[RMDB]
RNA sequence: GGGAACGACUCGAGUAGAGUCGAAAACGGCUAAAAGGCGUAUCGCGCAAACGCAAGCGUAUGAGCGCAAAACGCGGCGCGAUGCGCAGGAGUUUGACGCUUAACAUGAUCUGUCAGGGAUCCCCGGGCUGGGAGUUGGAUUCGUCCAGCUCUCGGUAAAAGAAACAACAACAACAAC
Reactivity to 2A3 in 0.01 (KOAc 150mM, MgCl2 10mM, bicine 150mM(pH8.5), 24C), signal-to-noise 9, nucleotides 027 to 126: c020g020g000c050u080a050a020a040a060g140g000c000g010u010a000u000c000g000c000g000c030a120a060a050c060g000c020a040a040g000c000g010u090a170u300g200a180g080c010g000c000a040a080a010a020c100g000c000g020g000c000g000c000g000a000u010g000c000g000c000a000g000g000a080g010u050u100u130g040a030c040g010c020u050u060a070a020c030a120u120g010a040u040c020u050g200u220c090a080g060g020g030a040u020c000c000c010c010g020g070
Reactivity to DMS in 0.01 (KOAc 150mM, MgCl2 10mM, bicine 150mM(pH8.5), 24C), signal-to-noise 9, nucleotides 027 to 126: c110g000g000c040u010a060a050a080a080g010g010c010g020u000a010u000c010g010c000g000c010a060a070a300c070g000c060a140a170g000c000g010u000a120u050g010a140g010c010g010c010a030a040a120a150c140g010c260g000g010c000g010c000g010a010u000g000c000g010c000a010g000g000a100g000u000u010u010g000a110c100g000c040u000u020a070a100c140a080u020g000a050u000c030u010g000u010c130a090g000g010g000a060u000c010c010c000c010g000g010